[RMDB]
RNA sequence: GGGAACGACUCGAGUAGAGUCGAAAAACAGGAGUCAGCUCAGACUUCUGCGAGUACCGAUUCUGCAAUCGGUGCAGAGUCUAGUCUACGCUGACUGGACUAGUAAGUGAUUGCAGAAUCACUUGCACCGCUACGUACGAUUCGUCGUACGUAGCGGAAAAGAAACAACAACAACAAC
Reactivity to 2A3 in 0.01 (KOAc 150mM, MgCl2 10mM, bicine 150mM(pH8.5), 24C), signal-to-noise 2, nucleotides 027 to 126: a020c030a010g020g000a000g020u010c000a030g000c120u060c170a040g030a020c000u000u000c000u030g000c020g030a010g030u070a030c000c060g010a000u010u020c000u010g000c020a020a000u000c010g190g040u100g000c030a060g030a000g230u000c010u020a000g000u000c020u050a100c240g100c250u070g020a000c010u000g010g000a000c020u000a020g050u010a030a250g180u030g110a000u000u010g000c000a000g020a010a000u020c000a000c000u030u040g050c050a040
Reactivity to DMS in 0.01 (KOAc 150mM, MgCl2 10mM, bicine 150mM(pH8.5), 24C), signal-to-noise 1, nucleotides 027 to 126: a160c070a060g010g010a010g010u000c000a150g000c240u020c300a150g000a040c040u000u000c000u000g010c000g000a110g020u000a100c100c090g000a020u000u000c030u000g000c020a020a020u000c000g030g020u000g000c020a140g010a070g020u000c000u000a000g000u000c010u000a130c300g020c210u010g000a020c000u000g000g000a020c030u030a050g020u000a060a090g030u000g000a000u000u000g000c070a060g000a010a030u000c000a020c050u000u000g010c080a240

An RNA of 177 nucleotides, treated with 2A3 and DMS and read out base by base. The 2A3 profile rests on 2,446 reads. Conditions: 150 mM KOAc, 10 mM MgCl2 and 150 mM bicine (pH 8.5), 24 C. For DMS the reverse transcriptase was MarathonRT. The data come from the RNA Mapping Database (RMDB), library OK2TRN.